[RMDB]
This 177-nucleotide RNA was probed chemically with 2A3 and DMS.
In probing experiments dimethyl sulfate is read out at A N1 and C N3, which are open when not base-paired.
For DMS the reverse transcriptase was MarathonRT.
For 2A3, 549 sequencing reads were counted.
Source: RMDB library OK1LIB, as collected in RNAgym.
RNA sequence: GGGAACGACUCGAGUAGAGUCGAAAAUUGAGUGUAAAUGGAGUUCUCAAUGCUUUAGAUGAAGGUCAAGUGAAUGAAAGUAGUAUGGUAAGAGAACCUGAACAAAUGAUAUCUGCAAAAGAAAGACCAAACGCGGAACAUUCGUGUUCCGCGUUUGAAAAGAAACAACAACAACAAC
Reactivity to 2A3 in 0.01 (KOAc 150mM, MgCl2 10mM, bicine 150mM(pH8.5), 24C), signal-to-noise 2, nucleotides 027 to 126: u090u010g000a000g040u080g080u250a070a000a160u120g070g000a020g040u000u000c010u000c130a130a050u030g000c000u070u000u090a050g040a160u160g200a160a030g070g010u000c030a010a040g040u060g090a120a070u020g000a010a020a120g040u010a000g040u000a030u130g000g020u160a210a000g030a000g000a300a040c000c000u000g040a030a020c160a140a080a100u100g040a000u020a000u190c000u040g070c140a030a000a000a000g110a160a170a000g080a070c000
Reactivity to DMS in 0.01 (KOAc 150mM, MgCl2 10mM, bicine 150mM(pH8.5), 24C), signal-to-noise 2, nucleotides 027 to 126: u010u010g030a050g000u000g000u000a010a130a090u010g010g010a080g020u030u000c000u000c080a100a060u060g050c030u000u000u050a180g000a120u010g050a090a020g020g030u000c050a090a130g000u010g000a180a140u020g010a110a100a030g030u000a010g020u010a000u000g000g000u030a090a110g000a040g040a020a040c000c000u020g010a090a080c110a120a060a100u020g000a060u000a010u020c010u010g000c130a070a080a110a040g010a030a060a070g000a160c170